Source: RMDB library TTRINS, as collected in RNAgym. The record gives the reactivity of an RNA of 177 nucleotides to 2A3 and DMS.
RNA sequence: GGGAACGACUCGAGUAGAGUCGAAAAGAUAUGGAUAUUACCCGCUGAUGACCUCCAUUGUUUAUCGUUGAUCGGAAACGAUCAACGAUAAACAAUGGAGCAAGGCGAGGUACUGUAUCCUAAGUCAUCACCUAAAUAAGUUCGCUUAUUUAGGUGAAAAAGAAACAACAACAACAAC
Reactivity to 2A3 in 0.01 (KOAc 150mM, MgCl2 10mM, bicine 150mM(pH8.5), 24C), signal-to-noise 3, nucleotides 027 to 126: g040a030u100a050u240g010g000a000u000a020u050u140a040c010c010c000g000c010u050g060a300u120g040a080c030c000u000c020c000a000u010u000g020u020u020u010a000u010c010g000u010u030g020a010u010c020g030g070a110a070a100c000g000a010u000c010a020a000c000g000a000u010a000a000a000c000a000a000u000g010g000a000g010c000a000a010g000g000c030g140a300g000g030u020a050c050u130g030u010a010u000c020c000u030a230a020g070u030c010a090
Reactivity to DMS in 0.01 (KOAc 150mM, MgCl2 10mM, bicine 150mM(pH8.5), 24C), signal-to-noise 7, nucleotides 027 to 126: g000a060u000a300u010g000g010a020u000a010u010u000a020c000c000c010g010c000u000g010a100u020g000a090c300c000u000c000c000a010u000u000g020u000u000u000a000u000c000g000u000u000g000a010u000c000g000g000a110a090a190c000g010a010u000c010a000a010c000g010a000u000a000a000a010c000a000a000u000g000g000a000g010c010a020a070g010g020c010g000a090g020g010u000a000c300u000g010u000a010u000c000c000u010a080a220g010u000c050a200
Reactivities are rounded to 0.1 and cut off at 0 and 3. The RNA was probed in 150 mM KOAc, 10 mM MgCl2 and 150 mM bicine (pH 8.5) at 24 C. For DMS, 14,605 sequencing reads were counted. For 2A3, 14,547 sequencing reads were counted.